[RMDB]
RNA sequence: GGGAACGACUCGAGUAGAGUCGAAAAGAUAUGGACGUUGAUCUAUGAGUGCGUUUGACGAAAUCGGAAACGAUUUCCGAGCACCAUAGGGAGUCCUAAGUCAAACGAACGGGUUCGCCCGUUCGAACAAGAAGAUAUUCUUCGGAAUAUCUUCUUGAAAAGAAACAACAACAACAAC
Reactivity to 2A3 in 0.01 (KOAc 150mM, MgCl2 10mM, bicine 150mM(pH8.5), 24C), signal-to-noise 7, nucleotides 027 to 126: g050a020u090a080u170g010g000a010c040g120u250u040g010a020u000c000u010a000u000g130a160g220u010g000c050g070u100u290u300g070a080c040g010a010a010a010u000c010g020g000a070a040a040c020g010a010u010u000u000c000c000g000a020g000c000a000c010c000a000u000a000g020g000g010a010g000u000c000c000u010a090a010g070u030c060a090a050a110c020g000a000a000c000g000g000g080u060u100c290g140c020c000c000g010u000u000c000g000a020a020
Reactivity to DMS in 0.01 (KOAc 150mM, MgCl2 10mM, bicine 150mM(pH8.5), 24C), signal-to-noise 9, nucleotides 027 to 126: g000a040u010a300u000g000g000a010c010g020u000u020g000a040u010c000u000a010u000g010a170g020u000g010c000g010u010u010u010g010a230c300g000a000a010a000u000c000g010g000a130a100a190c010g000a020u000u000u000c000c010g000a120g010c000a010c000c000a010u000a010g000g000g000a020g020u000c000c000u000a020a070g000u000c040a070a110a250c020g000a010a010c000g010g000g010u000u010c240g010c000c000c000g000u000u000c000g000a060a130